[RMDB]
RNA sequence: GGGAACGACUCGAGUAGAGUCGAAAAGGAGUGCAGUUCGCUGCACUCCAAAAUCUCUUCCUGGUUCUUCCCGAAGUCAGGAAAAGCUGGGUUGAGAGGAAAACGUAAACUAGUUCGCUAGUUUACGCCUUAACAUCUAGUUCGCUAGAUGUUAAGGAAAAGAAACAACAACAACAAC
Reactivity to DMS in 0.01 (KOAc 150mM, MgCl2 10mM, bicine 150mM(pH8.5), 24C), signal-to-noise 6, nucleotides 027 to 126: g010g010a020g030u000g010c000a010g010u000u020c230g020c000u000g010c000a000c000u000c000c000a010a010a060a110u000c010u000c010u000u000c000c000u000g000g010u000u000c050u000u000c000c000c030g020a200a140g010u010c130a060g000g000a020a010a020a010g000c010u000g000g000g000u010u000g000a020g000a040g010g000a060a050a070a230c030g010u000a000a000a000c000u000a000g010u000u020c230g020c000u000a010g000u000u000u000a010c000g010
Reactivity to 2A3 in 0.01 (KOAc 150mM, MgCl2 10mM, bicine 150mM(pH8.5), 24C), signal-to-noise 4, nucleotides 027 to 126: g000g000a000g000u000g000c000a000g000u030u100c160g090c100u000g000c000a000c000u010c000c000a000a000a000a000u000c000u000c000u010u000c000c000u000g020g010u010u010c000u020u030c010c010c010g160a300a080g170u260c120a060g000g000a010a000a000a000g000c000u010g000g000g000u020u020g000a010g000a020g050g040a070a150a010a020c020g000u000a000a000a000c000u000a000g030u050u050c230g010c090u000a000g000u010u010u000a000c000g000
Source: RMDB library RFMREP, as collected in RNAgym. An RNA of 177 nucleotides, treated with DMS and 2A3 and read out base by base. The RNA was probed in 150 mM KOAc, 10 mM MgCl2 and 150 mM bicine (pH 8.5) at 24 C. The DMS profile rests on 11,486 reads. 2A3 adducts were read by reverse transcription with SuperScript II with manganese.